Annotation:
Conditions: 150 mM KOAc, 10 mM MgCl2 and 150 mM bicine (pH 8.5), 24 C. Chemical mapping of a 177-nucleotide RNA with 2A3 and DMS.
RNA sequence: GGGAACGACUCGAGUAGAGUCGAAAAGAUAUGGAACGGUGGAGGGAGUCUCUCGGAAACGAGAAGACUUUGAUCUCCUUCGUUCCUAAGUCAAAGACUCGACACAACUUCGGUUGUGUCGAGUCAAGACACAAUGUAGGUUCGCCUACAUUGUGUCAAAAGAAACAACAACAACAAC
Reactivity to 2A3 in 0.01 (KOAc 150mM, MgCl2 10mM, bicine 150mM(pH8.5), 24C), signal-to-noise 2, nucleotides 027 to 126: g010a010u020a010u070g000g000a000a000c000g000g040u030g020g030a020g090g300g010a010g010u000c000u010c000u010c000g000g000a030a020a020c010g000a010g040a080a080g000a000c000u060u040u090g210a150u040c000u000c000c000u040u040c000g000u020u000c010c000u010a020a010g010u000c020a000a100a100g010a010c010u000c010g030a000c000a000c010a010a070c040u120u180c300g120g000u000u000g000u000g000u010c010g000a000g000u000c000a000a000
Reactivity to DMS in 0.01 (KOAc 150mM, MgCl2 10mM, bicine 150mM(pH8.5), 24C), signal-to-noise 2, nucleotides 027 to 126: g000a030u000a150u020g000g000a010a000c000g010g000u000g000g010a020g020g030g000a010g010u000c000u000c000u010c000g010g000a020a040a070c000g000a010g000a050a050g010a010c000u000u000u010g010a100u000c010u010c000c000u000u000c000g010u000u000c000c000u000a020a060g000u000c010a110a100a080g000a020c000u000c000g020a020c010a000c000a010a010c000u000u020c230g030g000u010u000g010u010g000u000c000g000a000g010u000c010a020a070
For 2A3, 6,009 sequencing reads were counted. Values cover nucleotides 27 to 126. For DMS the reverse transcriptase was MarathonRT. The data come from the RNA Mapping Database (RMDB), library TTRDEL.